[RMDB]
RNA sequence: GGGAACGACUCGAGUAGAGUCGAAAAGAUAUGGAGUUGAAAGACUUCGAUAAGCUGCUCGGAAACGAGGCAGCUUUUGACGAAGGGGAGACUCCUAAGUCGGACCACGAGCGUUCGCGCUCGUGAACACGGAGUACCUAUUCGUAGGUACUCCGUGAAAAGAAACAACAACAACAAC
Reactivity to DMS in 0.01 (KOAc 150mM, MgCl2 10mM, bicine 150mM(pH8.5), 24C), signal-to-noise 3, nucleotides 027 to 126: g000a040u000a300u010g000g010a010g010u000u010g000a260a110a190g010a120c000u000u000c000g010a120u000a020a010g000c000u000g000c000u000c010g000g000a120a110a150c010g010a010g010g010c010a000g020c000u010u000u000u010g000a140c110g020a030a020g000g000g020g010a300g000a020c000u000c000c000u000a040a110g000u000c000g000g000a190c190c010a010c000g010a010g010c000g030u000u020c220g010c020g020c000u000c000g010u000g020a070a170
Reactivity to 2A3 in 0.01 (KOAc 150mM, MgCl2 10mM, bicine 150mM(pH8.5), 24C), signal-to-noise 2, nucleotides 027 to 126: g010a000u050a040u140g000g000a010g010u030u050g090a190a110a060g190a130c000u000u000c010g020a060u030a050a020g000c000u010g000c010u000c020g030g010a050a080a020c030g010a080g180g070c010a000g000c000u020u010u000u030g130a070c050g020a000a000g000g000g020g020a070g040a020c010u010c020c000u010a140a010g050u010c020g030g040a080c000c040a010c020g010a010g000c050g030u140u140c300g050c000g010c140u020c000g000u000g060a020a010
The record gives the reactivity of an RNA of 177 nucleotides to DMS and 2A3. Values cover nucleotides 27 to 126. For DMS, 2,656 sequencing reads were counted.